[RMDB]
RNA sequence: GGGAACGACUCGAGUAGAGUCGAAAACGUCCGAUGCGGAAGUUCGUGCUUCCGUCGUACGCGAAAGUCGGACGGCGGCCAUGAGUCGCAACGCAAAGCCGCGGCAAGUGGAGUUAGCGAGAAGAGAAAAAGUCACGAGUGUUCGCACUCGUGACAAGAGUAGGCCUAAGUUCGCUUAGGCCUACUCAAAAGAAACAACAACAACAAC
Reactivity to 2A3 in 0.01 (KOAc 150mM, MgCl2 10mM, bicine 150mM(pH8.5), 24C), signal-to-noise 1, nucleotides 027 to 156: c010g000u000c000c000g000a000u060g020c000g000g010a010a010g000u080u300c120g160u300g130c000u030u010c020c000g000u020c010g030u000a050c100g000c000g090a130a000a030g010u000c000g000g030a000c030g020g000c000g020g070c000c040a130u130g050a060g010u020c000g000c040a160a000c030g020c110a190a110a070g100c090c060g040c020g010g020c080a100a000g030u020g020g020a050g000u140u120a080g050c020g040a030g010a100a030g110a030g060a010a180a000a000a000g000u000c000a000c000g000a000g020u020g050u060u140c080g030c070a000c000u000c000g020u000g000a000c000a000a000
Notes: Chemical mapping of a 207-nucleotide RNA with 2A3. For 2A3 the reverse transcriptase was SuperScript II with manganese. It was measured as part of the RMDB library M2RFPK.